[RMDB]
Conditions: 150 mM KOAc, 10 mM MgCl2 and 150 mM bicine (pH 8.5), 24 C. An RNA of 177 nucleotides, treated with DMS and read out base by base. It was measured as part of the RMDB library TTRINS. Reactivities are given for positions 27 through 126. Values are in units of 0.01, from 0 to 300, in steps of 10.
RNA sequence: GGGAACGACUCGAGUAGAGUCGAAAAGAUAUGGACCUAGUGUGAGUCCAACAGCGCGUUAGAAGUCAUAGGUCGGAAACGACCUAUGACUUCUAACGCGACAUGGACCCACUCAGGUCCUAAGUCACACUAAGGUAUUCUUCGGAAUACCUUAGUGAAAAGAAACAACAACAACAAC
Reactivity to DMS in 0.01 (KOAc 150mM, MgCl2 10mM, bicine 150mM(pH8.5), 24C), signal-to-noise 1, nucleotides 027 to 126: g010a060u000a300u010g000g000a000c000c000u010a130g020u000g000u000g000a090g030u000c000c010a030a080c220a220g020c020g000c000g010u000u000a020g030a060a020g010u000c000a000u020a020g020g010u020c000g060g000a100a060a200c010g040a040c010c030u000a010u030g010a000c010u030u000c000u000a020a010c010g020c000g040a010c110a080u000g000g000a020c000c000c010a020c020u000c140a030g000g020u000c010c000u000a010a060g010u010c050a290